[RMDB]
Chemical mapping of a 177-nucleotide RNA with 2A3 and DMS. Conditions: 150 mM KOAc, 10 mM MgCl2 and 150 mM bicine (pH 8.5), 24 C. For DMS, 1,999 sequencing reads were counted.
RNA sequence: GGGAACGACUCGAGUAGAGUCGAAAAGCGCAACACGGCGCGCACCGGACUGGCGUCGGCCUGGACCAGCGCCAGCGGCAGCGCGAUCAGUUCGUAAUCGCCUUCGUCCACGUCGUCCAGGCGGAGAGUCACGAUCAUCAUUCGUGAUGAUCGUGACAAAAGAAACAACAACAACAAC
Reactivity to 2A3 in 0.01 (KOAc 150mM, MgCl2 10mM, bicine 150mM(pH8.5), 24C), signal-to-noise 3, nucleotides 027 to 126: g010c010g020c030a000a090c020a040c210g060g000c010g000c020g000c000a000c000c010g020g110a100c000u010g000g010c010g000u050c040g070g040c030c130u160g050g040a160c000c010a020g040c010g000c020c000a000g020c000g010g000c020a110g010c020g000c000g010a090u090c030a040g060u080u040c010g040u090a060a080u040c030g030c000c000u050u060c040g050u000c020c020a080c060g090u070c030g010u010c040c010a030g000g000c000g050g040a120g020a020
Reactivity to DMS in 0.01 (KOAc 150mM, MgCl2 10mM, bicine 150mM(pH8.5), 24C), signal-to-noise 2, nucleotides 027 to 126: g010c000g050c160a090a050c090a060c030g020g010c030g030c000g000c010a230c020c020g000g020a070c000u000g000g000c020g020u000c110g040g010c010c100u000g020g000a050c020c060a090g010c010g020c000c000a050g000c010g000g000c070a070g010c040g030c010g010a010u020c120a130g010u000u000c060g010u000a140a110u000c020g040c020c010u000u000c150g000u000c000c020a110c120g020u000c060g010u000c030c020a040g020g030c020g030g010a120g010a190